[RMDB]
RNA sequence: GGGAACGACUCGAGUAGAGUCGAAAACACAGACAGCAGUCCAAACAGGAGCUGCAGGAAGGCCCUGGAGGAGGGAAGUACCACCAGUGCAGGCUUGAGGCUGAGAGAUGGUGAGGCUCGGGCAGAGCGCUACAGUGUGUUUCGACACACUGUAGCGAAAAGAAACAACAACAACAAC
Reactivity to DMS in 0.01 (KOAc 150mM, MgCl2 10mM, bicine 150mM(pH8.5), 24C), signal-to-noise 3, nucleotides 027 to 126: c060a140c160a130g040a150c120a110g000c030a040g020u020c010c030a100a110a100c200a100g010g010a090g040c010u010g010c030a060g010g000a120a110g010g000c030c040c020u000g000g010a050g020g010a030g020g000g010a060a090g020u010a100c050c050a040c070c070a030g000u010g000c060a100g000g020c090u010u000g000a090g010g010c030u000g000a080g000a040g000a050u000g000g000u000g020a090g020g010c030u000c080g000g000g020c030a060g000a110g010
Reactivity to 2A3 in 0.01 (KOAc 150mM, MgCl2 10mM, bicine 150mM(pH8.5), 24C), signal-to-noise 2, nucleotides 027 to 126: c060a000c010a020g080a080c040a010g010c010a000g010u030c010c010a140a150a150c080a150g000g050a060g050c000u010g030c020a010g050g060a000a040g030g000c000c000c030u050g000g040a050g030g020a020g030g040g030a050a040g050u070a040c030c040a020c050c030a030g050u010g100c030a010g050g050c000u090u130g050a050g080g000c020u020g020a020g000a010g000a170u090g000g000u070g030a050g050g000c030u030c050g000g010g000c020a010g020a010g040

Background:
Structure probing data (DMS and 2A3) for a 177-nucleotide construct. The reactions ran in a buffer of 150 mM KOAc, 10 mM MgCl2 and 150 mM bicine (pH 8.5), at 24 C. For DMS, 2,448 sequencing reads were counted. DMS adducts were read by reverse transcription with MarathonRT.